About this RNA: Structure probing data (2A3) for a 207-nucleotide construct. Conditions: 150 mM KOAc, 10 mM MgCl2 and 150 mM bicine (pH 8.5), 24 C.
[RMDB]
RNA sequence: GGGAACGACUCGAGUAGAGUCGAAAAGGGGGUGUAAUGGUCUCGACAUUGCUUUUCGCACAUGCAGUGCACCUCGGAGGCUCGGCUCCGUCAUCAACGGAACAGUUAAUAUAACUGCAAAGAACGAAAAUUCUUACGCUUUAGCUGCUUAAUAACCCCUCUACGUGUUCUUCGGAACACGUAGAGGAAAAGAAACAACAACAACAAC
Reactivity to 2A3 in 0.01 (KOAc 150mM, MgCl2 10mM, bicine 150mM(pH8.5), 24C), signal-to-noise 2, nucleotides 027 to 156: g020g000g000g000g000u030g010u030a080a130u090g020g010u060c020u030c070g010a020c010a030u070u100g020c050u060u060u070u120c060g050c000a020c020a070u200g050c050a040g020u000g000c060a040c000c000u090c000g000g000a010g000g000c050u060c300g040g060c080u020c010c010g010u030c000a010u000c010a000a000c000g030g000a010a000c000a000g000u010u020a140a030u110a160u050a240a050c060u080g000c030a010a030a060g010a040a040c110g170a200a070a070a020u010u000c010u040u020a110c120g000c030u050u000u070a030g000c020u030g000c040u050u140a050a030u160a130a140c020c030
For 2A3, 1,105 sequencing reads were counted. It was measured as part of the RMDB library RSTRND.